Background:
Chemical mapping of a 177-nucleotide RNA with DMS and 2A3. Values are in units of 0.01, from 0 to 300, in steps of 10.

[RMDB]
RNA sequence: GGGAACGACUCGAGUAGAGUCGAAAAAGUACCUAGUAGUACGCUACUAGGUACAUGCCGCACAACCUUCUGGUGUAGUGUUUGUCGCACAGCGAUGGCAAGCUGGUACGCUACGGCGUACCAGCAAUGCUAUGCUCUGAUUCGUCAGAGCAUAGCAAAAAGAAACAACAACAACAAC
Reactivity to DMS in 0.01 (KOAc 150mM, MgCl2 10mM, bicine 150mM(pH8.5), 24C), signal-to-noise 3, nucleotides 027 to 126: a090g000u000a000c000c000u010a010g000u000a000g030u010a140c260g040c010u010a000c000u030a000g010g000u000a000c000a060u020g000c020c000g000c090a050c110a090a050c040c010u000u030c190u010g010g010u000g000u010a050g020u000g020u020u000u030g000u000c040g000c030a110c100a110g000c070g000a040u010g000g000c060a130a100g000c000u000g000g000u000a000c000g010c000u000a080c160g060g020c000g020u000a000c000c000a000g010c040a020a000
Reactivity to 2A3 in 0.01 (KOAc 150mM, MgCl2 10mM, bicine 150mM(pH8.5), 24C), signal-to-noise 6, nucleotides 027 to 126: a000g000u000a000c010c000u010a000g000u000a000g010u010a010c230g030c060u000a000c010u000a000g000g000u000a000c000a000u020g010c000c010g060c000a030c010a040a080c020c010u250u250c110u260g030g000u080g040u090a150g010u030g060u080u080u190g040u050c030g010c050a120c080a280g020c030g040a040u070g050g000c060a070a020g000c000u000g000g000u000a000c000g000c010u000a030c270g100g000c000g000u010a000c010c000a000g000c000a000a000